[RMDB]
RNA sequence: GGGAACGACUCGAGUAGAGUCGAAAACUAUUGAGCAUUUUCUUUAUUCUUUGGCGGUAGAAUUGCAUUACGUGCUCAUUGUGCCAACUGCUCAUUUGUUGCUCCUUACUUAACAAUCCGGCAUUCGCCAUAGCUGAACGGUAAAAACGUGUCACUAUAUUCUCUCGCAUUUCGAUGCGAGAGAAUAAAAAGAAACAACAACAACAAC
Reactivity to 2A3 in 0.01 (KOAc 150mM, MgCl2 10mM, bicine 150mM(pH8.5), 24C), signal-to-noise 3, nucleotides 027 to 156: c030u040a010u070u020g010a010g020c010a070u020u140u250u040c080u080u270u140a190u260u110c100u080u080u060g020g000c030g060g010u090a050g070a150a090u090u140g010c080a080u090u130a090c170g040u060g020c020u010c030a040u020u080g090u070g040c020c020a060a020c050u000g000c000u030c020a050u030u100u120g020u030u020g070c000u010c020c010u030u080a150c030u160u180a130a050c030a150a140u120c100c020g010g010c000a070u150u120c090g000c000c010a050u050a020g050c090u030g010a020a020c020g040g070u170a070a030a030a020a020c090g000u070g060u090c010a000c010u020a020
Reactivity to DMS in 0.01 (KOAc 150mM, MgCl2 10mM, bicine 150mM(pH8.5), 24C), signal-to-noise 1, nucleotides 027 to 156: c030u000a080u010u000g010a000g060c020a130u000u030u000u000c050u000u060u020a110u050u010c000u000u000u030g000g020c060g100g020u020a120g000a030a010u000u000g050c020a160u000u000a130c090g070u000g000c050u000c030a030u000u000g000u000g050c080c040a060a180c120u000g010c000u010c020a120u000u000u000g030u000u020g030c010u000c020c050u000u010a130c080u000u000a080a120c080a050a050u020c000c000g030g030c000a100u000u020c040g000c000c000a070u000a060g000c030u000g020a300a080c040g000g000u000a060a070a110a100a120c090g020u000g020u000c060a120c040u000a080
The data come from the RNA Mapping Database (RMDB), library OK3TST. An RNA of 207 nucleotides, treated with 2A3 and DMS and read out base by base. For DMS the reverse transcriptase was MarathonRT. The 2A3 profile rests on 995 reads. The RNA was probed in 150 mM KOAc, 10 mM MgCl2 and 150 mM bicine (pH 8.5) at 24 C.